[RMDB]
RNA sequence: GGGAACGACUCGAGUAGAGUCGAAAAUGCCGGAACCGUCGCUGAUCUGGCAGGUCAUCAUCCGCCGACCUCCGAAGGAGAUAUUGCAGUUCAGCACUUCGCCUUCCACCGUGGCAUAAACGCCUGGGUGUUCUAACCUCUUCGGAGGUUAGAACACAAAAGAAACAACAACAACAAC
Reactivity to DMS in 0.01 (KOAc 150mM, MgCl2 10mM, bicine 150mM(pH8.5), 24C), signal-to-noise 1, nucleotides 027 to 126: u020g000c030c010g020g000a080a030c060c090g010u010c080g020c060u000g000a030u010c030u000g020g000c010a070g000g000u000c060a060u000c110a100u000c040c060g030c100c040g000a130c070c020u000c050c050g000a080a080g030g000a110g000a140u000a040u030u000g000c020a040g000u010u010c130a110g000c060a060c120u010u020c070g000c060c030u000u000c000c070a060c100c060g000u000g000g010c020a070u010a040a060a190c210g000c010c000u000g000g000
The record gives the reactivity of an RNA of 177 nucleotides to DMS. For DMS the reverse transcriptase was MarathonRT. The data come from the RNA Mapping Database (RMDB), library OK2TST.